[RMDB]
RNA sequence: GGGAACGACUCGAGUAGAGUCGAAAAGAAUAAAAGGCGAUACUCAGAAAUGAGUAGAACUCUCUCGACGCCGAAUGAUCGAAAGAUCAGAACCUCACGAUAGAGAGAGGAAUUGUGAGGAAAGAAAGGGAUCAUACAUGUUCGCAUGUAUGAUCCCAAAAGAAACAACAACAACAAC
Reactivity to 2A3 in 0.01 (KOAc 150mM, MgCl2 10mM, bicine 150mM(pH8.5), 24C), signal-to-noise 2, nucleotides 027 to 126: g170a000a060u210a200a160a010a000g070g000c020g000a010u010a000c000u010c000a020g060a070a020a090u030g000a000g010u000a010g040a000a000c000u000c000u000c010u000c040g060a130c070g000c010c010g000a030a100u100g000a000u020c020g030a040a060a060g010a000u020c010a000g090a050a040c000c010u000c000a010c000g000a000u110a020g010a020g000a000g020a000g000g000a030a070u060u010g000u000g000a000g000g070a110a090a000g080a060a060a010
Reactivity to DMS in 0.01 (KOAc 150mM, MgCl2 10mM, bicine 150mM(pH8.5), 24C), signal-to-noise 2, nucleotides 027 to 126: g000a070a130u100a040a050a050a120g010g030c020g010a220u000a000c000u000c000a010g000a210a160a180u010g030a000g000u020a060g040a060a190c040u020c000u000c000u000c070g000a080c000g000c000c000g000a060a070u020g000a010u000c030g000a120a110a090g000a000u000c070a070g080a010a080c000c000u000c040a030c070g040a000u000a040g000a020g000a000g000a050g040g070a030a020u010u000g000u000g000a000g000g030a140a080a090g030a040a160a110
Chemical mapping of a 177-nucleotide RNA with 2A3 and DMS. It was measured as part of the RMDB library OK1LIB. For 2A3 the reverse transcriptase was SuperScript II with manganese. For 2A3, 1,361 sequencing reads were counted.